[RMDB]
RNA sequence: GGGAACGACUCGAGUAGAGUCGAAAAUCGAAGUCAGCAUUCUAGGCCAUGGUGGUCAUUCCUCUGUCCCACCUGAUCAUACCACGAUCGGUAUCGCUUCAGAACUGAUUACUGAAUUUGAAGCCAAGCACCGAAUGUUUUUCGAAACAUUCGGUGCAAAAGAAACAACAACAACAAC
Reactivity to DMS in 0.01 (KOAc 150mM, MgCl2 10mM, bicine 150mM(pH8.5), 24C), signal-to-noise 1, nucleotides 027 to 126: u000c020g030a050a210g020u000c020a040g040c090a090u000u000c030u000a100g010g040c040c070a080u010g010g010u000g000g020u000c070a060u000u000c030c040u010c110u000g000u020c150c030c010a090c050c000u000g000a040u000c050a130u020a120c110c180a060c240g010a060u000c040g000g030u010a040u010c070g000c030u010u000c080a030g000a080a100c110u000g000a110u000u000a070c100u010g020a010a020u000u000u000g000a120a090g000c060c220a050a120
Reactivity to 2A3 in 0.01 (KOAc 150mM, MgCl2 10mM, bicine 150mM(pH8.5), 24C), signal-to-noise 1, nucleotides 027 to 126: u060c020g020a030a000g060u030c000a000g030c040a100u000u100c060u090a060g000g040c030c020a090u170g080g000u040g030g000u050c020a030u060u140c010c000u060c060u050g010u060c030c000c000a010c010c000u020g050a080u010c040a010u050a090c040c030a030c100g120a100u070c030g010g010u020a070u070c040g050c000u030u050c000a000g020a050a020c050u080g010a090u070u100a100c070u010g060a100a100u040u080u040g040a070a000g000c050c020a090a010